[RMDB]
RNA sequence: GGGAACGACUCGAGUAGAGUCGAAAAGUCAGCCAGCGUGAGGUCAAUACGCGUGGAAGGUGGUUGCUGGCGCAGCAUCGCUUCCGCUUCUGCCUCUUUGCCGCUUUCUCGCAGGCGGUUAGCGGUAACCUGGGGAUAGUUUCGACUAUCCCCAGGUAAAAGAAACAACAACAACAAC
Reactivity to DMS in 0.01 (KOAc 150mM, MgCl2 10mM, bicine 150mM(pH8.5), 24C), signal-to-noise 3, nucleotides 027 to 126: g010u010c060a140g010c030c050a080g010c020g000u010g010a090g010g010u010c120a070a080u010a050c150g010c150g000u000g010g000a050a040g020g030u000g020g000u000u010g010c020u010g010g000c280g010c050a080g020c070a050u000c090g000c040u000u010c030c010g000c050u000u000c080u000g000c030c040u000c100u020u000u000g010c010c010g010c020u000u000u000c040u000c100g010c120a080g000g010c020g000g000u010u000a010g010c010g000g000u010a080
Reactivity to 2A3 in 0.01 (KOAc 150mM, MgCl2 10mM, bicine 150mM(pH8.5), 24C), signal-to-noise 2, nucleotides 027 to 126: g090u060c040a020g010c020c050a010g010c040g080u100g010a060g020g020u100c020a030a090u110a140c060g060c040g070u070g020g050a050a050g090g120u130g030g050u080u080g000c020u060g040g160c120g030c060a020g000c010a060u040c050g020c090u070u030c010c030g000c020u050u040c020u070g020c000c020u110c000u040u080u110g000c000c020g020c010u050u060u070c070u030c070g040c050a040g100g000c030g000g000u010u020a010g010c000g000g010u040a070